[RMDB]
RNA sequence: GGGAACGACUCGAGUAGAGUCGAAAACGAAAAGCCCACCAACAUCUGGAUUGAAGGAAGCCCUUAUUACCCAAGUAGAUUUCAAGCAGGAGUGAUGAAAGGGGUUGGGCCGGCAGAGCUAGGAGACCUUCCAGUAGAGGUUCGCCUCUACUGGAAGAAAAGAAACAACAACAACAAC
Reactivity to DMS in 0.01 (KOAc 150mM, MgCl2 10mM, bicine 150mM(pH8.5), 24C), signal-to-noise 4, nucleotides 027 to 126: c080g020a110a090a120a120g010c000c000c000a110c060c060a050a110c090a100u000c030u020g000g010a140u000u010g040a080a080g000g010a120a140g010c020c020c000u030u030a060u020u000a110c020c010c000a050a100g010u010a040g000a100u010u010u030c060a060a110g010c050a060g010g000a050g000u000g010a040u010g000a050a080a060g030g000g000g000u000u020g000g000g020c030c000g010g000c060a050g000a090g000c030u020a060g000g000a060g010a090c150
Reactivity to 2A3 in 0.01 (KOAc 150mM, MgCl2 10mM, bicine 150mM(pH8.5), 24C), signal-to-noise 5, nucleotides 027 to 126: c060g040a030a040a000a050g070c000c000c000a010c000c010a030a070c020a060u050c010u050g090g030a170u080u090g070a060a030g060g030a030a030g010c000c000c000u070u070a080u100u130a100c010c000c010a050a040g050u070a030g040a170u090u090u080c040a050a050g040c010a030g020g080a060g070u060g020a070u020g040a060a030a000g020g020g000g000u030u070g020g010g000c020c000g040g010c030a010g000a000g080c030u080a030g000g050a040g020a040c000